[RMDB]
RNA sequence: GGGAACGACUCGAGUAGAGUCGAAAACUGGUUAAUUCCGUUAACGAACGAGACCUUAACCUGCUAAAUAGGAUCAGGAACUUCGUGUUCUUGUAUCACUUCUUAGAGGGACUUUGCGUGUCUAACGCAAGGAAGUUUGAGGCAAUAACAGGUCUGUGAAUGUCAUAAAGUUCGCUUUAUGACAUUCAAAAGAAACAACAACAACAAC
Reactivity to DMS in 0.01 (KOAc 150mM, MgCl2 10mM, bicine 150mM(pH8.5), 24C), signal-to-noise 4, nucleotides 027 to 156: c030u000g010g020u000u000a110a070u000u000c020c010g000u000u000a110a140c090g010a060a080c050g020a170g010a040c010c000u010u000a050a150c030c000u000g000c010u000a010a040a060u010a050g010g010a040u000c010a020g010g000a030a010c000u000u000c290g010u010g020u000u000c000u000u000g010u000a020u010c000a110c030u000u000c100u010u000a030g010a040g010g010g000a300c010u000u000u000g010c010g020u000g010u000c190u010a080a050c000g000c000a030a010g010g020a060a080g010u000u000u000g010a050g000g030c010a040a090u000a050a050c050a060g010g010u000c030u010g020u000
Reactivity to 2A3 in 0.01 (KOAc 150mM, MgCl2 10mM, bicine 150mM(pH8.5), 24C), signal-to-noise 9, nucleotides 027 to 156: c040u040g000g060u090u120a060a050u250u040c030c040g020u050u060a090a050c070g030a040a000c050g040a040g040a070c010c000u030u030a050a150c020c000u110g120c010u100a030a050a050u100a060g010g000a010u000c010a000g000g000a000a000c010u110u130c220g140u110g010u230u000c000u000u020g060u080a030u010c020a090c170u050u050c020u030u030a020g010a050g020g020g030a010c010u000u010u020g000c010g010u030g050u180c130u220a060a020c000g000c000a010a010g030g020a040a060g010u040u090u140g070a060g030g030c040a020a010u050a070a020c040a060g010g010u010c010u000g030u020